[RMDB]
RNA sequence: GGGAACGACUCGAGUAGAGUCGAAAAGAAAACCUGUGCGAUGCCCCGCUUUUUACCGGCUACACGCGCGAUGGCGGGUUCGCCACCCAUGUCGUCGCAGAUGCCGAUUUUGCUUUCGAUCUCGAUAUCCAUAAUCAGUAUUCGUACUGAUUAUGGAAAAAGAAACAACAACAACAAC
Reactivity to DMS in 0.01 (KOAc 150mM, MgCl2 10mM, bicine 150mM(pH8.5), 24C), signal-to-noise 9, nucleotides 027 to 126: g000a130a090a130a120c040c050u000g020u000g010c040g010a090u010g000c070c030c020c060g010c060u010u000u010u010u010a070c130c020g010g000c010u000a270c200a180c120g010c100g020c020g000a010u000g020g020c070g010g010g010u000u000c280g000c110c120a140c010c000c010a080u000g020u000c010g020u010c020g020c010a070g000a130u010g000c030c010g000a070u000u000u000u000g010c050u000u000u000c050g010a090u010c050u000c030g000a120u010a130
Reactivity to 2A3 in 0.01 (KOAc 150mM, MgCl2 10mM, bicine 150mM(pH8.5), 24C), signal-to-noise 5, nucleotides 027 to 126: g040a020a110a010a030c010c020u070g040u080g040c020g040a030u060g010c000c010c010c010g010c040u080u060u020u050u100a080c060c020g000g000c010u060a050c080a030c140g110c010g000c000g020a010u010g020g040c070g020g000g040u030u040c030g000c010c000a000c000c010c010a050u180g000u010c020g020u020c020g000c020a020g030a080u120g010c020c000g010a030u090u070u060u070g040c030u050u060u050c040g080a110u020c030u000c080g060a060u060a060